[RMDB]
RNA sequence: GGGAACGACUCGAGUAGAGUCGAAAAGCUCUGGAAUUGAGGCCCCUCUAACAAUAAUCCAAAACUACUUCACAGAGUAAUCUGCCGAAUCGUAGGAUGCCCAUUACUAUCUAUUUUUGGAGCAUCUAAAACUGUCAGUGCUUCGGCACUGACAGAACACACGAUACGACUUCGGUCGUAUCGUGUGAAAAGAAACAACAACAACAAC
Reactivity to 2A3 in 0.01 (KOAc 150mM, MgCl2 10mM, bicine 150mM(pH8.5), 24C), signal-to-noise 1, nucleotides 027 to 156: g010c000u020c010u000g020g190a140a080u190u040g060a080g040g010c000c000c000c000u070c080u050a130a100c080a070a070u130a010a000u030c060c030a000a110a130a020c030u070a030c000u010u040c060a030c030a130g040a010g000u080a170a110u000c000u060g060c000c040g020a030a070u040c000g050u040a030g040g000a000u020g040c030c000c000a000u010u010a010c030u090a180u180c080u050a300u120u050u000u030u050g020g030a110g000c000a000u020c040u070a030a030a030a030c000u000g000u000c000a000g000u000g000c000u040u010c100g050g020c000a000c000u000g000a000c000a000g000a000a000

Structure probing data (2A3) for a 207-nucleotide construct. For 2A3, 549 sequencing reads were counted. High 2A3 reactivity points to a flexible backbone, as in loops and unpaired stretches.